[RMDB]
RNA sequence: GGGAACGACUCGAGUAGAGUCGAAAAAACAGACAUCAAAUCGCAUAGCAAAGAGUCAAAAAAAUAGAGAGCUUUGCGAGACCUACCAAGGGUGAAGAGAUACCAUCCAAGGAGCUGAAGAGAAAUCGAGAGCUCACGGCGUUCGCGCCGUGAGCAAGGUACGGAUAACGUUCGCGUUAUCCGUACCAAAAGAAACAACAACAACAAC
Reactivity to 2A3 in 0.01 (KOAc 150mM, MgCl2 10mM, bicine 150mM(pH8.5), 24C), signal-to-noise 1, nucleotides 027 to 156: a000a000c070a060g060a020c030a050u090c070a050a050a050u020c020g010c030a030u030a010g000c010a030a160a010g100a100g100u110c060a170a190a030a010a030a000a030u190a030g080a000g000a020g050c000u010u020u020g000c010g000a010g030a010c000c010u040a050c030c010a040a090g030g020g000u010g070a090a040g080a000g020a080u070a110c000c020a010u020c050c000a010a020g030g000a020g000c030u060g090a100a030g070a020g020a020a040a070u080c030g020a010g010a010g200c000u000c000a000c000g000g000c000g010u020u100c090g020c000g000c070c000g010u030g010a000g000c010a010a010
Conditions: 150 mM KOAc, 10 mM MgCl2 and 150 mM bicine (pH 8.5), 24 C. An RNA of 207 nucleotides, treated with 2A3 and read out base by base. It was measured as part of the RMDB library M2RFPK. For 2A3, 562 sequencing reads were counted. Reactivities are rounded to 0.1 and cut off at 0 and 3.